This 207-nucleotide RNA was probed chemically with DMS and 2A3.
Values cover nucleotides 27 to 156.
The 2A3 profile rests on 3,225 reads.
DMS adducts were read by reverse transcription with MarathonRT.
RNA sequence: GGGAACGACUCGAGUAGAGUCGAAAAGCCGAGCUGGUGUCGACGCCGCGCGACUGGCGCUACUCCGACACACCGUGCCGGUACGCCGUCGAGGCGAUCAAGUCGUGGAGGACCGACGUACCGCCGAAGGGUCGGCACCAGUGGAUGCUGGCGCAGCGUGAUAGGACAAUUUCGAUUGUCCUAUCACAAAAGAAACAACAACAACAAC
Reactivity to DMS in 0.01 (KOAc 150mM, MgCl2 10mM, bicine 150mM(pH8.5), 24C), signal-to-noise 2, nucleotides 027 to 156: g050c000c020g030a300g010c000u010g000g020u000g040u010c000g020a040c030g010c000c000g000c160g030c000g030a040c000u010g090g010c030g000c070u000a040c050u010c010c030g000a040c010a050c010a160c120c110g000u000g000c000c010g030g000u000a040c010g000c010c010g030u000c020g010a250g000g060c000g000a050u000c090a070a080g030u000c020g000u000g010g010a230g030g010a160c080c000g000a050c040g000u000a050c040c010g000c010c000g020a160a110g020g000g010u000c010g000g000c000a010c000c000a020g000u010g000g010a100u010g030c050u010g000g010c040g000c090a130g010c200
Reactivity to 2A3 in 0.01 (KOAc 150mM, MgCl2 10mM, bicine 150mM(pH8.5), 24C), signal-to-noise 4, nucleotides 027 to 156: g030c000c000g010a020g010c010u000g000g010u000g000u000c000g030a040c070g140c220c000g010c020g010c010g030a000c050u180g000g000c010g000c030u080a050c080u010c040c020g060a030c010a000c010a120c080c180g000u010g000c020c000g030g000u030a050c000g000c010c010g010u030c030g040a060g000g000c020g010a000u060c090a090a100g000u000c060g060u160g040g090a160g020g080a100c080c020g000a010c010g000u040a050c010c010g000c020c000g070a090a090g030g000g000u000c000g000g020c010a000c000c010a000g000u000g010g000a030u110g020c090u110g010g050c050g020c050a050g060c010